[RMDB]
RNA sequence: GGGAACGACUCGAGUAGAGUCGAAAAGCUUGCUCUGACCAGGCGUGCUUCUCAGGCACAGACAUCGAUAGCGAAGGACGCCCCCGUUUGUCUUGCUUCGCUCAAAUCAAACUGUCGAGCGAGCGAAAUAUCGCUCCUCAUUCGUGAGGAGCGAUAUAAAAGAAACAACAACAACAAC
Reactivity to DMS in 0.01 (KOAc 150mM, MgCl2 10mM, bicine 150mM(pH8.5), 24C), signal-to-noise 3, nucleotides 027 to 126: g000c030u000u010g000c040u000c000u010g010a040c120c200a080g000g010c150g000u000g020c010u000u000c120u000c270a160g000g030c010a020c030a110g040a050c150a060u000c130g010a080u010a070g000c000g030a030a030g010g010a100c090g010c040c010c030c020c050g010u000u010u000g030u000c080u000u010g000c030u000u010c010g020c020u000c140a050a040a050u000c090a040a100a140c060u010g000u000c020g020a020g010c020g000a010g020c000g020a020a080
Reactivity to 2A3 in 0.01 (KOAc 150mM, MgCl2 10mM, bicine 150mM(pH8.5), 24C), signal-to-noise 1, nucleotides 027 to 126: g000c020u020u000g000c010u020c120u210g020a090c100c090a000g050g100c050g000u000g020c000u160u080c080u000c120a030g020g000c000a010c010a040g210a080c030a140u130c110g050a080u040a020g000c000g010a000a000g030g040a010c020g090c040c010c000c000c030g010u090u120u120g040u010c070u080u140g050c000u020u020c010g010c070u010c020a020a070a010u030c010a000a000a170c010u070g000u020c030g000a000g000c010g020a000g000c000g000a020a000
Structure probing data (DMS and 2A3) for a 177-nucleotide construct. The data come from the RNA Mapping Database (RMDB), library OK2TST. The 2A3 profile rests on 856 reads. For DMS the reverse transcriptase was MarathonRT.